[RMDB]
RNA sequence: GGGAACGACUCGAGUAGAGUCGAAAAACCAGGAGGAGCGGCACCACCCCUUUCCAGCUGCGGUCAGCGGUUUAGUGGUGCCGAUUGGGACAUGGACGACGGGUCAGCCGCAACCGGAGCAGCUGGACAUAAUUUAGCUCUUCGGAGCUAAAUUAUGAAAAGAAACAACAACAACAAC
Reactivity to 2A3 in 0.01 (KOAc 150mM, MgCl2 10mM, bicine 150mM(pH8.5), 24C), signal-to-noise 2, nucleotides 027 to 126: a000c030c020a020g010g030a120g030g040a070g050c020g000g000c000a000c000c010a010c000c010c000c040u010u110u020c010c010a000g020c000u010g000c020g040g050u090c040a050g030c010g000g040u090u120u110a030g030u030g000g000u000g010c000c000g000a010u010u050g010g010g010a030c040a070u080g080g040a030c070g010a020c050g070g000g020u070c030a010g020c030c000g010c020a030a030c030c020g080g020a050g000c000a000g000c000u000g000g020a000
Reactivity to DMS in 0.01 (KOAc 150mM, MgCl2 10mM, bicine 150mM(pH8.5), 24C), signal-to-noise 4, nucleotides 027 to 126: a100c050c040a080g000g010a100g000g000a120g020c010g010g010c010a020c010c010a080c010c040c020c030u010u010u000c000c000a020g010c000u010g000c010g030g010u000c130a110g020c030g000g010u010u010u010a100g020u000g010g010u010g000c010c000g000a010u000u000g000g010g010a090c130a090u000g000g010a090c110g020a130c100g000g000g000u000c070a140g000c020c010g010c040a260a060c040c050g010g010a180g010c010a010g010c000u000g000g000a090
Structure probing data (2A3 and DMS) for a 177-nucleotide construct. The DMS profile rests on 6,489 reads. The 2A3 profile rests on 4,146 reads. 2A3 adducts were read by reverse transcription with SuperScript II with manganese. The RNA was probed in 150 mM KOAc, 10 mM MgCl2 and 150 mM bicine (pH 8.5) at 24 C.